[RMDB]
RNA sequence: GGGAACGACUCGAGUAGAGUCGAAAAAGGAGUAAUCCCCGCUGAAACAGGGUUUUCACCCUUCCUUUCUUCGGGUUUCCUUCCUCUGUUGCGGACCUCGCCCGGAGUCUUCUCGACCAGCGCAGGUUCUGACGCGACCGGUGGCAUCACCGAGUUGGAAAAUCCUAAACUUCGGUUUAGGAUUUUCAAAAGAAACAACAACAACAAC
Reactivity to 2A3 in 0.01 (KOAc 150mM, MgCl2 10mM, bicine 150mM(pH8.5), 24C), signal-to-noise 1, nucleotides 027 to 156: a040g000g000a010g000u000a020a070u090c000c000c000c000g000c020u000g000a000a010a030c300a280g020g080g000u150u100u250u210c100a030c000c000c000u010u010c010c000u010u000u010c000u010u010c000g020g020g000u050u000u000c000c000u040u000c010c000u000c030u060g040u040u030g000c050g000g000a000c000c000u000c010g040c060c080c100g280g030a190g040u000c090u300u130c110u160c100g030a000c010c000a010g020c000g010c080a020g020g000u010u000c010u010g010a000c000g030c010g020a010c010c000g070g000u020g030g070c060a090u100c000a270c000c010g010a080g020u030u010g090
Reactivity to DMS in 0.01 (KOAc 150mM, MgCl2 10mM, bicine 150mM(pH8.5), 24C), signal-to-noise 1, nucleotides 027 to 156: a020g020g010a040g050u000a040a060u010c130c000c050c030g010c030u000g020a080a030a060c130a040g000g030g010u010u000u020u010c200a140c020c000c000u000u000c070c010u010u000u000c030u020u000c040g030g020g000u000u000u000c010c000u000u000c010c000u000c110u000g020u000u010g000c050g030g040a030c010c020u000c020g040c010c040c000g000g000a300g000u000c080u000u010c190u010c140g020a100c050c020a120g030c070g080c110a000g030g020u010u010c010u000g000a100c080g020c000g040a030c020c020g030g030u000g030g030c260a220u010c020a090c000c010g010a100g030u000u050g020